[RMDB]
RNA sequence: GGGAACGACUCGAGUAGAGUCGAAAAGGCCGGGACGAAGACCGCGGCGGAGCUGAACCUCGGCUAUCCCGCGAUCGCCCUCGCUAAGGUCACCCUGCCCGUCUCCACGGCGACGAUCACCGCCGGGAUGAUCACCGACCUCCGCAAGGUCGCGAACGCAGUUCAGUAGUUUCGACUACUGAACUGCAAAAGAAACAACAACAACAAC
Reactivity to 2A3 in 0.01 (KOAc 150mM, MgCl2 10mM, bicine 150mM(pH8.5), 24C), signal-to-noise 1, nucleotides 027 to 156: g040g010c050c020g030g030g000a120c120g080a140a090g060a080c010c030g000c050g070g050c060g010g000a040g000c060u110g030a130a150c000c020u070c030g000g010c030u030a120u150c020c020c000g030c040g040a020u030c000g010c000c010c020u000c010g000c050u040a070a070g000g000u000c010a060c010c000c000u020g000c000c000c000g000u030c000u000c000c020a120c050g000g020c000g030a070c140g030a040u130c080a070c160c030g030c000c000g030g000g010a120u160g030a050u080c050a040c090c020g020a010c010c010u070c030c020g000c050a030a020g030g000u020c020g000c020g020a040a020c040